Chemical mapping of a 177-nucleotide RNA with 2A3 and DMS. It was measured as part of the RMDB library OK2TRN. For DMS, 1,299 sequencing reads were counted. For 2A3 the reverse transcriptase was SuperScript II with manganese. For 2A3, 1,514 sequencing reads were counted. The RNA was probed in 150 mM KOAc, 10 mM MgCl2 and 150 mM bicine (pH 8.5) at 24 C.
RNA sequence: GGGAACGACUCGAGUAGAGUCGAAAAUGCAGGCGGCCGCCGACCGACGCCUGCACGGUCAGCACGUUCGUCAUCGUGUUCAUCAGCUUCGUCGACGCGGUGGCCAUCGUGUUCGUCAGCGCGGUCACGCUGGUCGUGGAUUCGUCCACGACCAGCGAAAAGAAACAACAACAACAAC
Reactivity to 2A3 in 0.01 (KOAc 150mM, MgCl2 10mM, bicine 150mM(pH8.5), 24C), signal-to-noise 1, nucleotides 027 to 126: u050g030c000a000g000g060c030g020g000c030c010g000c010c040g040a030c000c020g060a110c080g000c000c000u000g000c000a000c000g000g000u030c020a010g000c000a010c010g010u000u030c030g030u050c020a010u000c000g100u000g090u250u000c030a160u070c050a000g100c060u300u170c140g140u120c070g020a010c020g000c040g040g000u000g000g000c010c000a030u020c000g030u000g000u110u020c020g040u010c060a050g070c020g000c030g060g000u040c000a010
Reactivity to DMS in 0.01 (KOAc 150mM, MgCl2 10mM, bicine 150mM(pH8.5), 24C), signal-to-noise 2, nucleotides 027 to 126: u000g010c030a030g000g020c280g010g030c000c010g000c030c070g010a090c060c010g000a080c020g030c040c030u000g010c030a030c020g000g010u000c080a060g010c010a040c000g020u000u010c300g040u000c030a010u000c010g020u010g010u020u000c040a160u000c140a130g020c180u020u000c150g000u010c180g010a020c020g000c020g000g040u000g020g000c020c090a020u000c000g000u000g000u020u000c110g000u010c070a090g020c110g000c050g000g000u000c050a180